The record gives the reactivity of an RNA of 177 nucleotides to DMS. The reactions ran in a buffer of 150 mM KOAc, 10 mM MgCl2 and 150 mM bicine (pH 8.5), at 24 C. Reactivities are given for positions 27 through 126. The DMS profile rests on 1,112 reads.

RNA sequence: GGGAACGACUCGAGUAGAGUCGAAAAGAUAUGGAAUUAACGUUGAGGUUGCCAUUUACGAGUUCCAUUCGGAAACGAAUGAAGAACGAUGAGUAACUGUGGCAACCUCAACGUUAAUUCCUAAGUCGACUACCAUUGGGUUCGCCCAAUGGUAGUCAAAAGAAACAACAACAACAAC
Reactivity to DMS in 0.01 (KOAc 150mM, MgCl2 10mM, bicine 150mM(pH8.5), 24C), signal-to-noise 2, nucleotides 027 to 126: g020a070u070a300u000g020g000a010a000u000u000a030a020c010g030u000u010g000a020g000g020u000u000g010c000c030a030u020u000u000a020c010g020a160g000u000u010c010c000a000u000u000c020g010g000a170a120a250c020g000a040a000u000g000a300a090g010a010a010c030g010a150u020g030a300g070u000a010a020c300u010g000u000g000g040c000a000a040c010c000u010c000a000a000c030g040u000u000a000a000u000u000c000c000u000a010a080g030u000c150